[RMDB]
RNA sequence: GGGAACGACUCGAGUAGAGUCGAAAAUAAUCGGCUAAUUACGGCUAAUCGAUUAUACGGCAUAUAUUAGCUACGUAGCUACGUACGAUGCAUGCUACGAUCGCGCGAUGCAUUACGAUAUUACGCGGAUGAUGCGCAGAUUCGUCUGCGCAUCAUCAAAAGAAACAACAACAACAAC
Reactivity to DMS in 0.01 (KOAc 150mM, MgCl2 10mM, bicine 150mM(pH8.5), 24C), signal-to-noise 2, nucleotides 027 to 126: u000a100a060u000c100g000g010c020u000a040a060u020u000a120c140g010g020c030u010a100a060u000c070g000a090u000u020a100u000a080c100g010g000c030a100u000a060u000a040u000u010a040g000c060u000a090c040g030u000a090g020c130u000a020c060g020u000a080c100g020a050u010g010c000a020u000g000c000u000a060c150g000a080u050c080g000c030g020c030g000a040u000g020c040a070u030u000a110c200g010a060u000a060u000u000a040c050g020c030g010
Reactivity to 2A3 in 0.01 (KOAc 150mM, MgCl2 10mM, bicine 150mM(pH8.5), 24C), signal-to-noise 2, nucleotides 027 to 126: u090a000a060u080c050g030g000c060u060a030a060u150u070a080c100g000g000c020u040a070a080u090c120g040a040u060u100a040u170a150c120g070g000c090a020u000a000u020a020u110u080a000g010c020u010a070c020g070u020a020g020c040u100a010c030g020u020a030c080g100a020u130g020c020a020u060g000c020u030a040c070g120a150u090c020g000c020g000c020g080a040u040g000c020a020u070u230a040c060g020a020u060a040u170u040a060c050g020c050g100